[RMDB]
RNA sequence: GGGAACGACUCGAGUAGAGUCGAAAACGGGUGUGCUCAGAGCAGGGGGCCUGAGGAAUGGCUCCUCUGUUUAUAACACACCCAAUAUAAACCUGGUCAUGAUGUGAGGAGGGCUACAAAGUUUGUUCAUUGUUAGCCUGUUCGCAGGCUAACAAUGAAAAGAAACAACAACAACAAC
Reactivity to 2A3 in 0.01 (KOAc 150mM, MgCl2 10mM, bicine 150mM(pH8.5), 24C), signal-to-noise 1, nucleotides 027 to 126: c050g000g000g000u010g000u000g050c110u000c180a150g000a000g050c000a000g000g000g000g000g020c000c000u080g000a080g000g300a290a090u120g000g000c030u230c050c000u140c070u020g000u000u000u000a190u030a020a000c000a000c000a000c000c000c000a000a000u000a000u000a030a060a000c050c000u010g050g000u010c050a020u060g000a000u100g030u020g060a000g030g000a010g000g000g000c000u080a040c050a000a100a010g010u000u040u070g030u050u010